[RMDB]
RNA sequence: GGGAACGACUCGAGUAGAGUCGAAAACAGAUCGAAUGCUGGCAUUAGGAUUACUUGGUCUUGAGCUCCCGAUAGGUGAGCUCGGCUUGAGGGCCUAGUAGCCAGCGGCGUCAUAUUCCUGAUCCCUAUGCAGUGGCGAUUUCGAUCGCCACUGCAUAAAAGAAACAACAACAACAAC
Reactivity to 2A3 in 0.01 (KOAc 150mM, MgCl2 10mM, bicine 150mM(pH8.5), 24C), signal-to-noise 1, nucleotides 027 to 126: c050a010g000a020u100c000g020a250a090u110g000c000u000g020g000c000a000u070u000a050g070g000a000u050u090a200c000u000u000g050g000u050c040u060u300g000a000g000c000u030c000c000c030g050a270u300a170g000g030u250g000a000g000c000u000c000g000g000c000u090u290g000a000g000g070g000c000c010u000a000g050u030a010g000c000c000a000g040c000g000g000c000g070u130c110a070u030a060u120u010c020c070u010g010a130u030c000c010c000u010